An RNA of 177 nucleotides, treated with DMS and 2A3 and read out base by base.
For 2A3 the reverse transcriptase was SuperScript II with manganese.
Values are in units of 0.01, from 0 to 300, in steps of 10.
[RMDB]
RNA sequence: GGGAACGACUCGAGUAGAGUCGAAAACGGAGGCCUCCUUUGAGUCGAUGGGGCGGCUUCAUUAAGCGGCGCUAACAAGGCGAACAAAUGCAGGGCCCAGAAGCUUUCUUGCAGCGCCGGCGCCUUAUUUUAGCCUUUUAUUCGUAAAAGGCUAAAAAAAAGAAACAACAACAACAAC
Reactivity to DMS in 0.01 (KOAc 150mM, MgCl2 10mM, bicine 150mM(pH8.5), 24C), signal-to-noise 5, nucleotides 027 to 126: c110g000g010a030g000g000c000c000u000c000c020u000u000u010g010a200g020u020c140g000a120u010g000g000g000g000c100g000g000c000u000u000c000a060u040u060a080a100g010c170g010g010c010g020c000u000a080a100c220a100a110g000g000c010g000a090a070c140a100a160a060u020g000c000a010g000g000g000c010c030c080a150g000a110a160g000c020u000u020u030c010u040u000g000c030a020g010c020g010c020c000g010g000c000g020c020c000u000u010a020
Reactivity to 2A3 in 0.01 (KOAc 150mM, MgCl2 10mM, bicine 150mM(pH8.5), 24C), signal-to-noise 5, nucleotides 027 to 126: c050g080g000a010g020g010c000c010u030c010c010u110u080u190g200a150g110u200c100g090a120u190g010g030g000g000c040g010g000c000u000u010c010a050u070u170a090a020g110c050g040g020c010g000c030u020a050a070c070a220a020g000g000c000g010a050a050c080a080a100a010u030g000c010a000g010g010g020c000c030c030a110g110a160a010g020c010u090u200u100c020u120u050g010c000a010g040c000g010c000c000g000g000c000g000c010c010u030u060a110

Description
In probing experiments dimethyl sulfate is read out at A N1 and C N3, which are open when not base-paired.